About this RNA:
Chemical mapping of a 177-nucleotide RNA with DMS and 2A3. The RNA was probed in 150 mM KOAc, 10 mM MgCl2 and 150 mM bicine (pH 8.5) at 24 C. For 2A3, 2,553 sequencing reads were counted. DMS adducts were read by reverse transcription with MarathonRT.
RNA sequence: GGGAACGACUCGAGUAGAGUCGAAAAGAUAUGGAUCGAGGCAUCUUUUGACGAUCGCAGGGUCGGAAACGACCCUGAUGAUCGAUAAGAUGCUCGAUCCUAAGUCAAAGCUGGCUUCGGCCAGCAAGUUCUCUUUAUGCUUCGGCAUAAAGAGAACAAAAGAAACAACAACAACAAC
Reactivity to DMS in 0.01 (KOAc 150mM, MgCl2 10mM, bicine 150mM(pH8.5), 24C), signal-to-noise 1, nucleotides 027 to 126: g000a030u000a300u010g010g000a010u000c000g010a030g030g030c030a000u000c000u000u000u000u000g030a160c120g020a000u000c000g020c010a010g050g030g010u010c000g000g030a080a050a170c000g010a010c010c000c000u010g000a010u000g040a020u000c020g020a130u020a010a010g020a000u000g010c010u000c000g000a000u000c000c000u000a000a070g000u000c010a150a090a160g030c020u020g020g000c010u000u010c230g020g050c010c010a020g000c020a030a050
Reactivity to 2A3 in 0.01 (KOAc 150mM, MgCl2 10mM, bicine 150mM(pH8.5), 24C), signal-to-noise 1, nucleotides 027 to 126: g010a010u090a010u120g000g000a000u010c010g020a070g130g190c020a000u000c030u070u150u190u280g300a220c160g030a000u000c000g000c000a000g000g020g040u000c010g000g000a040a050a000c000g000a000c000c020c010u000g050a020u020g020a000u020c020g010a000u060a100a000g020a000u010g000c000u000c010g020a000u000c000c000u000a010a000g010u000c010a130a100a000g000c000u010g040g000c010u080u130c300g120g030c050c000a000g010c010a000a000